[RMDB]
RNA sequence: GGGAACGACUCGAGUAGAGUCGAAAAUCCCGCCUCACCCCGCUCCAUCACACCAGCUGGCCCUCUUUGCUUCCUUUUCCCAGAAUCGUUAAGCCCCGACUCCCACUAGCACCUCGUACCAACCUCGCUAUUACAGGCUGUUCGCAGCCUGUAAUAGAAAAGAAACAACAACAACAAC
Reactivity to DMS in 0.01 (KOAc 150mM, MgCl2 10mM, bicine 150mM(pH8.5), 24C), signal-to-noise 2, nucleotides 027 to 126: u000c020c020c000g010c080c050u000c030a120c040c040c030c060g000c010u010c040c040a060u010c080a110c110a110c060c030a030g020c060u000g010g010c000c030c010u000c050u010u010u000g000c070u000u020c030c000u000u000u000u000c000c020c010a210g010a070a040u000c060g010u000u000a070a180g000c040c010c030c030g010a090c060u000c010c010c030a070c110u000a070g010c060a080c040c060u000c030g000u000a060c030c060a080a090c070c030u000c100g000